[RMDB]
RNA sequence: GGGAACGACUCGAGUAGAGUCGAAAACAUACUCAUCUGUUACGGUCAGAGAAGAUACUUUGUAUGAUAUCUGUCUUUCAAAAUAAAAUAUCUUGUGGCUUAACAUAUAGUCUAUCCUGCAAAACGUCCCAUGGCACUUCUGAACAAUGUAUGUGCAUCGGGAUCGACUGUUCGCAGUCGAUCCCGAAAAAGAAACAACAACAACAAC
Reactivity to 2A3 in 0.01 (KOAc 150mM, MgCl2 10mM, bicine 150mM(pH8.5), 24C), signal-to-noise 2, nucleotides 027 to 156: c080a000u130a030c010u030c050a100u000c060u030g030u050u010a070c080g020g020u030c020a030g040a020g010a150a020g000a010u040a130c130u080u090u070g060u110a080u080g100a150u060a070u040c100u110g180u080c000u110u210u180c030a070a060a030a030u100a010a070a030a010u130a020u030c000u040u120g040u010g020g090c010u020u030a010a020c030a020u070a010u050a060g010u000c040u050a060u060c000c030u030g020c030a030a030a020a030c050g030u010c000c000c010a020u020g180g000c000a000c000u020u010c030u070g060a090a050c030a150a040u220g060u080a040u040g000u030g000c020a020